An RNA of 177 nucleotides, treated with DMS and 2A3 and read out base by base. The reactions ran in a buffer of 150 mM KOAc, 10 mM MgCl2 and 150 mM bicine (pH 8.5), at 24 C.

RNA sequence: GGGAACGACUCGAGUAGAGUCGAAAACAAUAAUUCAUGAUGUAAAAAUGUUAUGAGGAUGUUUUUAUUAGAGGCUAAAAAAAAAUGUUUAUGCAAUGAUAAAACGAGUUAAGCAUUUUUUUUUAAGCUAGAUAUCAAAGUUCGCUUUGAUAUCUAGAAAAGAAACAACAACAACAAC
Reactivity to DMS in 0.01 (KOAc 150mM, MgCl2 10mM, bicine 150mM(pH8.5), 24C), signal-to-noise 2, nucleotides 027 to 126: c050a070a150u050a060a150u040u000c000a000u010g010a030u010g010u020a060a110a090a160a070u030g000u020u000a020u000g000a030g000g010a070u000g000u020u000u010u000u020a060u050u020a110g010a100g020g010c020u010a000a000a010a000a000a000a010a010a000u000g000u010u000u000a000u040g020c040a060a130u010g000a130u020a050a070a080a110c140g000a180g000u000u000a000a010g000c000a000u000u000u000u000u000u000u000u000u000a030a070g000
Reactivity to 2A3 in 0.01 (KOAc 150mM, MgCl2 10mM, bicine 150mM(pH8.5), 24C), signal-to-noise 4, nucleotides 027 to 126: c020a020a110u180a150a080u070u020c010a020u030g040a000u030g030u160a100a140a200a140a110u110g000u050u030a040u040g000a000g050g010a060u060g040u030u070u000u080u070a170u100u110a090g050a040g120g050c060u070a000a000a000a000a000a000a000a000a000u010g000u040u010u010a050u080g020c030a110a110u100g040a100u230a110a110a030a040c040g020a050g130u030u020a010a000g000c010a010u000u000u000u000u000u000u000u000u000a020a000g020